[RMDB]
RNA sequence: GGGAACGACUCGAGUAGAGUCGAAAAGGUGCUCUGAAUGGAGUGCUCUACUGAGAUUAUAAAAUAGAAGGUAAGCUAUUAUCUCUUACAACAGGGCAGGGCUUGUUGGAAUAGGCGGUAGAGUCUAAAAACUACCUCACCUUCGGGUGAGGUAGAAUCAUUCCUCUCGGUUCGCCGAGAGGAAUGAAAAAGAAACAACAACAACAAC
Reactivity to 2A3 in 0.01 (KOAc 150mM, MgCl2 10mM, bicine 150mM(pH8.5), 24C), signal-to-noise 1, nucleotides 027 to 156: g020g000u010g000c000u000c010u000g190a180a110u240g040g000a040g000u070g010c020u060c010u040a010c030u050g010a010g040a110u080u190a130u160a200a070a100a040u190a020g060a080a060g130g000u120a040a000g010c030u000a010u130u010a070u050c050u000c040u080u140a070c040a080a010c010a010g020g000g090c010a040g030g020g000c000u000u000g000u000u010g050g010a060a090u040a010g030g010c010g020g030u070a020g000a020g030u010c020u040a030a060a070a000a020c000u000a000c000c000u000c000a010c010c020u040u040c280g050g040g000u000g000a000g000g010u000a000g000a000a000

Overview
The record gives the reactivity of an RNA of 207 nucleotides to 2A3. The 2A3 profile rests on 583 reads. Source: RMDB library M2RFPK, as collected in RNAgym. As a SHAPE reagent, 2A3 marks flexible, mostly unpaired nucleotides at the ribose 2'-OH. The RNA was probed in 150 mM KOAc, 10 mM MgCl2 and 150 mM bicine (pH 8.5) at 24 C.